[RMDB]
RNA sequence: GGGAACGACUCGAGUAGAGUCGAAAAGAUAUGGACACAAUCUAAAGGGAGCUCGCCUUUCGGAAACGAAAGGGAGCAUCGAUCUUUAGAGUUGUGUCCUAAGUCAAAAUCCUAGUUCGCUAGGAAACAUGCAAGAUUGGUUCGCCAAUCUUGCAUGAAAAGAAACAACAACAACAAC
Reactivity to DMS in 0.01 (KOAc 150mM, MgCl2 10mM, bicine 150mM(pH8.5), 24C), signal-to-noise 2, nucleotides 027 to 126: g010a050u010a300u030g010g020a000c000a000c010a020a070u000c010u000a000a000a000g000g010g010a050g000c020u000c000g010c030c000u020u010u000c000g010g010a140a100a200c000g030a010a000a020g000g010g010a020g040c000a160u000c180g000a010u020c000u000u000u000a020g000a050g020u010u000g030u000g000u000c000c000u020a000a050g010u000c090a140a060a090a170u000c000c000u000a000g030u000u000c300g030c010u010a000g000g010a020a050a250
Reactivity to 2A3 in 0.01 (KOAc 150mM, MgCl2 10mM, bicine 150mM(pH8.5), 24C), signal-to-noise 2, nucleotides 027 to 126: g030a030u080a050u150g050g000a000c010a010c020a020a010u000c010u000a000a000a000g060g030g000a000g010c000u000c030g300c060c010u030u050u000c030g090g020a150a080a050c020g020a020a000a000g000g040g000a010g010c000a020u120c000g000a020u020c010u010u010u020a030g020a020g100u020u000g010u000g000u010c000c010u000a020a000g000u010c020a000a010a060a300u000c000c000u000a010g010u010u100c300g040c090u000a020g010g180a080a050a090